[RMDB]
RNA sequence: GGGAACGACUCGAGUAGAGUCGAAAACGACAAGGGUGUAAAGAUCGCUGUUUUACUCGGCAUGAUACCACCGUUAUCGGGUCAACAGAGUAGUUGCAAAUGACAACAAUGCUCAGGGUUAUGCUCUAAAAGUUCGUACCCUUCGGGGUACGAACAAGCAUCCAAGCUUGUUCGCAAGCUUGGAUGCAAAAGAAACAACAACAACAAC
Reactivity to 2A3 in 0.01 (KOAc 150mM, MgCl2 10mM, bicine 150mM(pH8.5), 24C), signal-to-noise 1, nucleotides 027 to 156: c120g090a010c070a090a090g060g000g030u090g000u110a050a040a000g010a120u070c090g000c130u020g080u000u080u030u150a080c170u060c050g000g020c000a050u100g000a000u110a070c000c030a030c000c000g060u080u070a050u220c000g000g030g000u090c010a000a000c040a090g040a040g030u070a010g000u050u000g060c110a110a160a240u200g060a050c000a000a000c000a010a150u130g000c000u000c000a000g170g000g020u120u150a010u130g030c000u000c020u120a000a120a000a000g000u010u010c000g000u000a000c020c000c000u000u000c080g020g000g020g000u000a010c020g000a000a000c000a000a000
An RNA of 207 nucleotides, treated with 2A3 and read out base by base.
The data come from the RNA Mapping Database (RMDB), library M2RFPK.